[RMDB]
RNA sequence: GGGAACGACUCGAGUAGAGUCGAAAAAGAGCAUUCGUGCUCUAGUCUUCCUAAGUCUCGAUGGAGGAAGUCAGCUCGAAGAACGAAUCGGAAACGAUUCGGGAGAGCUGUCUUCCGUUGAAAUCGAGAUAUGGAUCAUAGGGACCUUCGGGUCCAAGUGAUAGCAGGAAUUCGUUCCUGCUAUCACAAAAGAAACAACAACAACAAC
Reactivity to DMS in 0.01 (KOAc 150mM, MgCl2 10mM, bicine 150mM(pH8.5), 24C), signal-to-noise 2, nucleotides 027 to 156: a000g010a000g030c020a090u000u000c240g020u000g050c000u020c000u000a110g010u030c050u000u010c000c010u000a140a290g020u000c010u030c010g060a010u000g000g000a250g000g050a020a010g020u010c020a000g020c020u020c020g000a150a270g000a210a270c000g010a030a010u000c000g000g000a230a170a300c030g030a010u000u000c000g000g000g000a240g030a000g010c000u010g000u000c000u010u000c000c010g030u020u010g000a150a220a060u000c000g030a030g000a020u000a100u000g010g000a070u000c000a120u000a120g030g020g010a030c010c000u000u000c250g070g060g000u000c020c000a020a170
Reactivity to 2A3 in 0.01 (KOAc 150mM, MgCl2 10mM, bicine 150mM(pH8.5), 24C), signal-to-noise 3, nucleotides 027 to 156: a000g030a010g000c020a030u130u180c250g130u070g010c000u000c000u000a030g060u000c080u090u040c000c010u030a110a080g010u000c000u010c000g010a000u010g010g060a030g000g010a010a010g010u020c000a000g010c000u000c020g170a300a050g010a090a030c010g000a000a000u010c000g000g000a060a060a070c010g000a000u000u000c000g000g000g000a030g000a000g000c010u000g000u000c000u000u000c000c000g010u020u000g010a010a000a000u010c000g000a000g000a000u000a020u030g020g000a010u090c060a110u270a200g100g000g000a000c020c000u050u080c290g120g010g010u000c020c020a020a010